[RMDB]
RNA sequence: GGGAACGACUCGAGUAGAGUCGAAAAAGCCAUACCAUUACGAUGGUAUGGCAAGUCCGUGACGGCGAUGGAUCCCGCCUGGCCGAUGCCGAACUGUCGAUCUGGCUGAUGGUUCCUGCCCCGUCAAAAAACGUAAAGCACUUCGGUGCUUUACGAAGAAGAAGCGUGUGUUCGCACACGCUUCUUCAAAAGAAACAACAACAACAAC
Reactivity to 2A3 in 0.01 (KOAc 150mM, MgCl2 10mM, bicine 150mM(pH8.5), 24C), signal-to-noise 1, nucleotides 027 to 156: a000g000c000c000a000u000a000c000c000a000u090u020a070c300g080a000u010g000g000u000a010u000g030g020c000a000a000g020u000c000c000g000u050g010a020c010g010g010c140g040a020u050g000g000a020u020c000c000c000g000c020c030u070g000g010c000c000g010a000u010g080c080c030g220a160a100c050u170g000u010c000g020a010u050c000u000g000g000c010u060g040a200u180g000g000u050u000c000c000u040g030c070c030c000c020g000u000c000a010a010a010a010a010a010c030g000u000a000a000a000g000c010a000c000u000u070c190g060g000u000g000c010u000u000u010a000c010g000a060a020

This 207-nucleotide RNA was probed chemically with 2A3. The RNA was probed in 150 mM KOAc, 10 mM MgCl2 and 150 mM bicine (pH 8.5) at 24 C.